[RMDB]
Chemical mapping of a 207-nucleotide RNA with 2A3. Source: RMDB library OK3TST, as collected in RNAgym. Values are in units of 0.01, from 0 to 300, in steps of 10. 2A3 adducts were read by reverse transcription with SuperScript II with manganese.

RNA sequence: GGGAACGACUCGAGUAGAGUCGAAAAUCACGUUAGUGCAUAUAGGUCUACCCAUUCUUUCAGUGACUGCUUAAUAGCCUACUCCUAAUGAUGGAGUUGACUUUCCUCAUACAUUAUGCUACACUGGCACAUGUGCACAUAAAUCGGGAGCAGCGUACGAGUCCUGAUGAUUCGUCAUCAGGACUCGAAAAGAAACAACAACAACAAC
Reactivity to 2A3 in 0.01 (KOAc 150mM, MgCl2 10mM, bicine 150mM(pH8.5), 24C), signal-to-noise 1, nucleotides 027 to 156: u140c040a020c060g080u140u170a070g000u050g000c010a000u080a020u050a130g140g000u030c060u060a070c010c020c010a050u080u000c090u000u060u080c080a100g030u050g190a300c000u020g060c070u160u120a020a090u070a120g040c010c000u040a010c000u030c010c000u110a240a150u270g130a180u220g000g000a100g000u030u040g000a000c000u040u120u040c020c070u060c000a050u090a110c010a010u020u000a010u250g010c040u000a010c030a000c020u010g040g050c010a000c000a080u070g000u030g000c000a000c000a050u200a030a030a000u090c010g030g030g000a040g000c030a000g000c030g030u080a120